[RMDB]
RNA sequence: GGGAACGACUCGAGUAGAGUCGAAAACAUCUGGUUGGAAACGUAAUAAUUACGGCACUUAUUAUAAAUCAGAAAAUGCAACUUAUAGCAAUGGUAACACACCAAUUAUCACACGUACAGUAGGACCUAUCGGUAACUAGUUCGCUAGUUACCGAUAAAAAGAAACAACAACAACAAC
Reactivity to 2A3 in 0.01 (KOAc 150mM, MgCl2 10mM, bicine 150mM(pH8.5), 24C), signal-to-noise 6, nucleotides 027 to 126: c010a050u000c010u040g000g050u020u040g070g050a150a040a000c040g030u010a010a060u090a120a100u250u080a020c020g050g000c050a020c080u030u010a010u100u060a090u140a120a080a010u040c020a010g020a040a140a020a020u090g010c030a060a050c090u170u110a070u110a180g050c050a070a080u090g010g020u140a090a010c040a000c020a010c100c030a040a050u110u120a060u130c010a000c020a010c070g060u120a040c030a070g070u060a040g020g060a000c000c010
Reactivity to DMS in 0.01 (KOAc 150mM, MgCl2 10mM, bicine 150mM(pH8.5), 24C), signal-to-noise 5, nucleotides 027 to 126: c060a120u000c020u000g000g040u010u010g010g000a080a110a130c130g000u000a020a050u010a030a040u010u010a090c070g000g000c070a110c140u010u010a040u010u020a060u000a070a050a030u010c010a030g010a060a030a070a100u000g030c090a040a050c120u010u010a070u020a070g010c050a050a080u000g000g010u000a030a050c120a090c100a070c040c060a050a090u020u010a030u010c040a060c090a030c120g000u000a050c120a040g000u000a050g010g000a100c080c030
Chemical mapping of a 177-nucleotide RNA with 2A3 and DMS. High 2A3 reactivity points to a flexible backbone, as in loops and unpaired stretches. Source: RMDB libraries RFM100 and RFMREP, as collected in RNAgym. Conditions: 150 mM KOAc, 10 mM MgCl2 and 150 mM bicine (pH 8.5), 24 C. For DMS the reverse transcriptase was MarathonRT.